[RMDB]
RNA sequence: GGGAACGACUCGAGUAGAGUCGAAAAUGCUCCACUCGCUUGUGCUAAAUGCGAGUGAAAUGUCCGUGAUGGUUGUCAACUUCUGUGAGCGGACUGGGACGAAUUACCCUCAACUGUCAAAAUGGGCAUUAGGUACCGAUUUCGAUCGGUACCUAAUAAAAGAAACAACAACAACAAC
Reactivity to DMS in 0.01 (KOAc 150mM, MgCl2 10mM, bicine 150mM(pH8.5), 24C), signal-to-noise 6, nucleotides 027 to 126: u040g010c040u000c030c000a020c000u000c000g010c030u000u020g020u020g050c260u050a070a090a060u030g000c000g010a000g000u000g000a020a060a030u020g010u000c010c000g030u010g000a090u010g000g000u010u030g020u020c090a100a100c170u010u050c060u030g020u020g010a230g030c060g010g010a050c040u000g010g020g010a100c100g010a090a120u030u040a110c000c020c010u020c060a050a070c080u020g000u010c030a060a070a110a120u030g010g010g000c070
Reactivity to 2A3 in 0.01 (KOAc 150mM, MgCl2 10mM, bicine 150mM(pH8.5), 24C), signal-to-noise 7, nucleotides 027 to 126: u080g030c010u010c030c000a010c010u010c000g030c020u110u120g100u280g200c110u230a120a100a050u150g010c000g000a010g010u010g010a030a000a010u130g000u000c010c020g030u020g010a040u070g020g020u040u040g040u070c090a130a110c130u070u020c020u090g100u090g080a050g020c020g000g000a020c020u060g020g000g030a030c050g060a100a090u140u150a220c010c000c000u040c040a100a140c070u080g030u060c020a050a040a020a180u130g000g000g030c020
The data come from the RNA Mapping Database (RMDB), library OK1LIB. Structure probing data (DMS and 2A3) for a 177-nucleotide construct. DMS adducts were read by reverse transcription with MarathonRT.